[RMDB]
RNA sequence: GGGAACGACUCGAGUAGAGUCGAAAAGUAAUUCCUUACUAGUUAAUGAGUUUCAGACUUAAGUAUGAUGUUGUGUUUGCAUAUAGUUCGGGAAACCGAACUUGAGUAACAAUUUGUUACUCAUUUAUCUUAAGCAUAUCUUCGGAUAUGCUUAAGAAAAAGAAACAACAACAACAAC
Reactivity to DMS in 0.01 (KOAc 150mM, MgCl2 10mM, bicine 150mM(pH8.5), 24C), signal-to-noise 2, nucleotides 027 to 126: g010u010a120a260u000u000c000c010u000u000a040c040u020a070g010u020u000a050a090u010g000a110g010u010u000u010c080a120g000a040c020u000u000a070a080g020u000a020u020g000a120u020g040u010u000g040u010g000u010u010u000g020c120a050u000a080u010a020g010u000u020c010g000g020g000a070a090a250c000c000g010a020a010c010u000u000g000a010g000u000a000a010c010a060a200u000u000u010g030u000u000a000c010u000c000a060u000u000u000a050
Chemical mapping of a 177-nucleotide RNA with DMS. Conditions: 150 mM KOAc, 10 mM MgCl2 and 150 mM bicine (pH 8.5), 24 C. The DMS profile rests on 1,564 reads. DMS (dimethyl sulfate) methylates the pairing face of unpaired adenines and cytosines.